[RMDB]
RNA sequence: GGGAACGACUCGAGUAGAGUCGAAAAGCCUAACAGUUCGCUGUUAGGCAAAUGCACAGACUUCGCUACUGUGAAAAACACAACAGAAGUGUCUAUGCGAGGAUCGUUGCGUCUUCGGACGCAACAAUUCGAGCGACAGAUUCGUCUGUCGCUCGAAAAAAGAAACAACAACAACAAC
Reactivity to DMS in 0.01 (KOAc 150mM, MgCl2 10mM, bicine 150mM(pH8.5), 24C), signal-to-noise 2, nucleotides 027 to 126: g010c000c000u000a000a020c000a000g030u000u020c210g020c010u010g000u020u000a010g000g010c000a000a040a030u000g000c000a020c020a010g030a020c010u010u000c130g030c080u010a100c050u000g000u000g000a090a090a060a060a110c100a050c130a060a140c020a030g030a100a050g010u030g000u000c020u000a060u000g000c000g000a220g010g000a030u000c000g010u000u010g000c000g020u000c000u000u010c180g020g030a030c000g040c000a000a000c000a030a080
Reactivity to 2A3 in 0.01 (KOAc 150mM, MgCl2 10mM, bicine 150mM(pH8.5), 24C), signal-to-noise 1, nucleotides 027 to 126: g000c000c000u020a000a000c000a000g030u080u110c130g040c080u020g000u000u000a010g010g000c000a000a000a030u070g010c000a010c010a000g040a020c000u070u090c110g030c100u100a050c010u050g050u040g040a090a020a010a030a010c090a010c030a110a050c040a040g050a140a020g100u050g030u120c010u060a020u070g020c010g050a090g070g030a050u080c150g030u000u020g000c000g000u030c000u020u070c130g090g010a000c000g000c000a000a000c000a000a020
Notes
Conditions: 150 mM KOAc, 10 mM MgCl2 and 150 mM bicine (pH 8.5), 24 C. Structure probing data (DMS and 2A3) for a 177-nucleotide construct.